[RMDB]
Annotation
Source: RMDB library OK2TST, as collected in RNAgym. Chemical mapping of a 177-nucleotide RNA with 2A3 and DMS. The reactions ran in a buffer of 150 mM KOAc, 10 mM MgCl2 and 150 mM bicine (pH 8.5), at 24 C.
RNA sequence: GGGAACGACUCGAGUAGAGUCGAAAAACUCCAUUGCUAAGUCCCCUGCUCAUUUAGGGUCUACCUCAAUAGAGUUUGGAGCAGGGUCCUGUUGCCAGCUAUUUUUCCUCGGUGGAAGCCCCGCAACGGUAACAUCAUGUUUCGACAUGAUGUUACCAAAAGAAACAACAACAACAAC
Reactivity to 2A3 in 0.01 (KOAc 150mM, MgCl2 10mM, bicine 150mM(pH8.5), 24C), signal-to-noise 2, nucleotides 027 to 126: a000c020u000c020c010a090u060u120g000c030u090a020a030g040u070c010c000c000c000u010g000c000u010c010a100u070u070u120a020g020g000g080u060c040u070a120c030c010u080c030a040a060u060a100g180a060g120u000u270u220g050g000a000g000c000a000g000g020g030u010c010c010u030g030u060u080g000c020c010a010g010c060u070a140u070u130u000u080u050c010c000u010c050g100g000u090g090g000a070a040g000c000c020c030c030g000c040a080a070c100
Reactivity to DMS in 0.01 (KOAc 150mM, MgCl2 10mM, bicine 150mM(pH8.5), 24C), signal-to-noise 3, nucleotides 027 to 126: a070c060u000c010c030a120u010u010g000c090u010a110a080g010u000c100c000c000c010u000g000c050u010c010a110u010u010u010a100g020g000g000u000c060u010a060c060c070u020c170a090a170u000a070g010a060g020u000u000u000g010g010a020g020c010a030g000g000g040u010c060c020u000g000u000u010g020c000c090a060g010c070u010a050u010u000u000u000u000c030c010u010c170g020g030u000g000g000a090a100g000c030c010c000c030g010c190a060a070c120